Annotation: Chemical mapping of a 177-nucleotide RNA with DMS and 2A3. It was measured as part of the RMDB library OK2TRN.
RNA sequence: GGGAACGACUCGAGUAGAGUCGAAAAAGCUGCACAAAAUCGGCGGAAAGGACCCCGCUAUCGGGAGCGGCUAGCAGCGAGGGUUGCCGCUCCAGCCGCGCUAUGAAGCAGGCAUAGCAGAUUUACAAUCGAGUAUAUCAUUCGUGAUAUACUCGAUAAAAGAAACAACAACAACAAC
Reactivity to DMS in 0.01 (KOAc 150mM, MgCl2 10mM, bicine 150mM(pH8.5), 24C), signal-to-noise 7, nucleotides 027 to 126: a090g020c010u000g010c020a200c200a080a050a110a080u010c100g020g000c010g000g000a080a120a150g010g020a140c140c040c010c030g000c040u000a060u010c160g010g010g010a030g010c010g010g010c010u010a070g010c040a040g000c040g010a100g010g000g010u000u010g010c020c000g010c020u000c000c020a040g020c070c050g020c150g010c010u000a040u000g010a120a100g010c040a080g000g010c020a050u000a020g020c020a130g000a110u010u010u010a080c240a100
Reactivity to 2A3 in 0.01 (KOAc 150mM, MgCl2 10mM, bicine 150mM(pH8.5), 24C), signal-to-noise 4, nucleotides 027 to 126: a010g010c000u020g020c060a000c050a080a140a060a180u160c070g020g000c030g020g030a110a100a040g180g020a060c020c010c010c000g000c020u060a080u160c090g080g000g000a000g010c000g000g000c030u030a020g030c020a010g030c010g050a120g040g140g030u070u060g020c010c000g000c000u000c000c000a000g000c000c010g040c010g000c000u030a030u130g050a080a020g030c040a020g030g000c000a000u010a010g000c010a010g060a170u160u150u080a090c100a040
Source information:
The RNA was probed in 150 mM KOAc, 10 mM MgCl2 and 150 mM bicine (pH 8.5) at 24 C.